The data come from the RNA Mapping Database (RMDB), library RNAMAK. Structure probing data (DMS and 2A3) for a 207-nucleotide construct. The reactions ran in a buffer of 150 mM KOAc, 10 mM MgCl2 and 150 mM bicine (pH 8.5), at 24 C. For 2A3, 1,086 sequencing reads were counted.
RNA sequence: GGGAACGACUCGAGUAGAGUCGAAAAGGGGUCUCGUUCCUUGAGGUGUAGACAUGCUCUGAAGCCUCCACGGAGCAACAGCUACACUCCCCACCAAGGCCCGGACGAGACGGAGGCACCCAAAACUCAGUAUUGAUGUUCGCAUCAAUACUGAGAACUAUAAGGGAGGGUUCGCCCUCCCUUAUAGAAAAGAAACAACAACAACAAC
Reactivity to DMS in 0.01 (KOAc 150mM, MgCl2 10mM, bicine 150mM(pH8.5), 24C), signal-to-noise 1, nucleotides 027 to 156: g010g030g030g020u000c010u000c000g030u000u000c000c040u000u000g000a120g000g030u000g050u000a000g010a050c090a300u010g020c000u010c000u030g000a040a140g000c000c000u000c010c020a300c010g000g040a010g010c040a070a060c120a210g010c000u010a030c030a020c020u000c130c020c040c050a300c100c100a130a110g000g030c200c020c040g000g000a040c020g000a050g050a120c020g030g030a060g140g030c000a180c000c010c020a070a040a070a290c010u050c000a000g010u010a040u010u020g010a020u000g020u000u000c300g010c010a010u010c010a000a000u010a010c010u000g010a020g020a030a110
Reactivity to 2A3 in 0.01 (KOAc 150mM, MgCl2 10mM, bicine 150mM(pH8.5), 24C), signal-to-noise 1, nucleotides 027 to 156: g110g020g030g020u030c030u020c000g060u120u230c000c000u030u090g050a150g080g070u050g020u010a000g020a090c070a110u210g000c010u000c000u040g050a140a020g010c000c020u010c020c010a020c020g010g020a000g040c020a080a080c120a110g150c010u040a000c030a010c060u200c050c000c020c000a050c000c000a050a080g090g000c000c060c030g000g030a030c010g010a010g010a030c060g000g000a000g000g000c000a050c000c000c000a030a200a070a100c000u000c000a000g000u000a010u000u010g000a000u010g010u070u080c300g030c170a010u020c000a000a000u000a000c000u000g000a000g000a000a020